[RMDB]
RNA sequence: GGGAACGACUCGAGUAGAGUCGAAAAAGAAAGAGAAUACGAAUAGUGAUCAUAUCGUAUCACAUAUUGAAACAGAAAGAAGAAGUAACGAGAGGUAACUUUUUGUGAAUGUAGUUAAACAUUUUUGUUUUGCAAACCGGAAUAUAGUACCCGGUACUAAUACAUUGCCUUUCGAGGCAAUGUAUUAAAAAGAAACAACAACAACAAC
Reactivity to 2A3 in 0.01 (KOAc 150mM, MgCl2 10mM, bicine 150mM(pH8.5), 24C), signal-to-noise 3, nucleotides 027 to 156: a000g090a020a030a000g050a000g020a050a050u070a060c030g050a030a060u070a120g030u030g030a030u030c040a030u090a080u160c050g030u110a010u010c010a000c030a030u130a030u080u160g060a060a040a000c020a020g060a070a050a000g050a000a030g000a030a020g030u060a040a030c060g010a020g000a010g170g020u030a020a050c000u050u070u030u130u080g040u010g050a040a060u050g020u050a040g020u040u130a110a130a030c010a050u020u060u030u030u060g010u020u020u000u040g010c030a000a000a180c010c010g020g050a070a050u260a030u050a150g070u030a030c010c000c000g000g020u000a010c010
Reactivity to DMS in 0.01 (KOAc 150mM, MgCl2 10mM, bicine 150mM(pH8.5), 24C), signal-to-noise 2, nucleotides 027 to 156: a150g010a150a010a150g010a150g010a100a040u000a060c090g000a040a080u000a080g040u000g040a110u000c130a100u000a140u000c090g010u000a060u000c030a020c070a120u000a080u000u000g000a160a100a140c050a090g000a070a090a060g020a100a070g000a060a120g020u000a060a050c050g010a130g030a030g020g000u000a020a060c050u000u000u000u000u020g050u000g030a040a050u000g020u010a000g020u000u010a110a040a050c060a110u010u010u000u030u000g010u010u000u000u000g000c030a110a070a040c020c000g000g000a100a080u000a100u010a130g020u000a150c180c020c010g000g000u000a100c140